[RMDB]
RNA sequence: GGGAACGACUCGAGUAGAGUCGAAAAGUCGCCGCGUCAACAUCAACGCCCAGCGCGGGCGAGGGAUGCGUCCUACGGGGGUGACCCAUUCGCCGGCAUGGAAGAGGACGGCAAGAUUGCCGCGACGAAUUAGUAUAGUCUUCGGACUAUACUAAUUAAAAGAAACAACAACAACAAC
Reactivity to 2A3 in 0.01 (KOAc 150mM, MgCl2 10mM, bicine 150mM(pH8.5), 24C), signal-to-noise 9, nucleotides 027 to 126: g020u010c010g000c020c010g000c010g010u020c030a080a080c010a090u030c010a020a070c030g030c000c020c000a100g110c260g030c110g170g000g010c000g000a040g040g080g010a030u070g080c020g070u040c010c010u040a130c110g090g000g010g010g020u040g070a080c020c010c010a080u090u070c030g020c030c000g070g060c060a070u100g070g020a090a070g050a050g100g020a020c020g000g020c020a020a040g040a070u120u300g010c010c010g010c010g000a010c010g010
Reactivity to DMS in 0.01 (KOAc 150mM, MgCl2 10mM, bicine 150mM(pH8.5), 24C), signal-to-noise 9, nucleotides 027 to 126: g010u000c010g020c000c090g020c010g000u000c020a050a120c050a070u010c040a110a100c040g010c050c000c010a170g020c180g020c140g010g010g010c010g010a050g010g000g010a050u000g010c020g010u000c010c010u010a110c140g020g000g000g000g010u000g000a120c030c010c020a150u010u010c040g010c020c010g010g020c070a080u010g000g010a120a150g010a090g000g000a050c020g000g000c150a070a090g000a110u000u000g020c030c070g010c010g010a030c050g000
Source information:
Structure probing data (2A3 and DMS) for a 177-nucleotide construct. The reactions ran in a buffer of 150 mM KOAc, 10 mM MgCl2 and 150 mM bicine (pH 8.5), at 24 C.